The record gives the reactivity of an RNA of 177 nucleotides to DMS.

RNA sequence: GGGAACGACUCGAGUAGAGUCGAAAAGCAAGACAGGAGGAAGCUGCAAAUUUGUUAACUUCUGUGACUGAGGGUGGUGGAUCAUUCUCAUUGGCAUCAUGCAUCCAACAAUCUCAAUGCACUAUCAUGAGUCGAUUUUAUUCGUAAAAUCGACUCAAAAAGAAACAACAACAACAAC
Reactivity to DMS in 0.01 (KOAc 150mM, MgCl2 10mM, bicine 150mM(pH8.5), 24C), signal-to-noise 1, nucleotides 027 to 126: g030c000a130a130g000a040c010a000g050g010a010g010g000a200a090g000c010u010g000c160a110a160a230u000u020u020g010u000u000a040a290c070u000u000c020u000g010u020g060a100c120u010g000a030g040g020g040u010g000g070u000g000g000a080u000c040a030u000u000c040u000c030a060u000u010g010g020c100a050u000c110a070u020g000c100a050u000c010c030a000a040c040a010a040u010c030u000c010a050a140u000g000c000a110c110u020a100u020c130a090
For DMS, 716 sequencing reads were counted. Reactivities are given for positions 27 through 126.